Chemical mapping of a 207-nucleotide RNA with DMS and 2A3. The reactions ran in a buffer of 150 mM KOAc, 10 mM MgCl2 and 150 mM bicine (pH 8.5), at 24 C. For DMS the reverse transcriptase was MarathonRT. It was measured as part of the RMDB library OK3TST. Reactivities are given for positions 27 through 156. For DMS, 2,992 sequencing reads were counted. High 2A3 reactivity points to a flexible backbone, as in loops and unpaired stretches.

[RMDB]
RNA sequence: GGGAACGACUCGAGUAGAGUCGAAAAGUAUAGCAUGACUGGCAAUGCGUAUACGAUGAAUCAGCCAGUAAAGAAUCCGUUGUGCGAAAGCACUUCGGUAAUGCAUAAUCGGUUCGAGUACAGCCCGAUACGAGAACCGUUGUUAGUACGGGCUAGAAUUAAAUGAGUCGUUCGCGACUCAUUUAAUAAAAGAAACAACAACAACAAC
Reactivity to DMS in 0.01 (KOAc 150mM, MgCl2 10mM, bicine 150mM(pH8.5), 24C), signal-to-noise 2, nucleotides 027 to 156: g060u010a080u000a110g020c000a020u000g010a110c020u000g000g040c000a170a030u000g000c040g020u000a130u000a120c070g020a240u020g000a110a140u000c100a110g010c020c020a050g010u050a060a090a200g030a300a180u010c000c000g040u000u010g020u020g010c000g000a170a130a240g010c000a000c000u010u010c020g030g050u010a020a010u020g000c100a180u010a130a100u010c010g000g000u010u000c000g000a300g020u000a040c020a020g000c000c000c000g000a040u000a010c020g000a300g010a010a040c030c020g040u000u000g030u000u000a180g030u000a140c050g030g030g020c040u000a060g020a220
Reactivity to 2A3 in 0.01 (KOAc 150mM, MgCl2 10mM, bicine 150mM(pH8.5), 24C), signal-to-noise 1, nucleotides 027 to 156: g070u070a040u110a130g030c000a010u020g040a100c000u000g020g040c030a070a030u050g040c050g000u030a110u050a130c100g110a150u300g090a020a120u070c020a010g120c020c000a000g020u030a030a070a020g070a010a020u070c000c000g000u010u000g020u000g030c000g040a080a050a080g000c010a000c000u000u000c010g010g000u020a060a020u130g020c030a080u050a130a160u220c040g010g030u030u020c000g000a010g010u020a020c010a040g010c030c020c000g000a020u050a030c000g000a000g000a030a020c020c000g010u020u040g010u030u070a090g020u050a040c010g000g000g000c060u010a080g070a160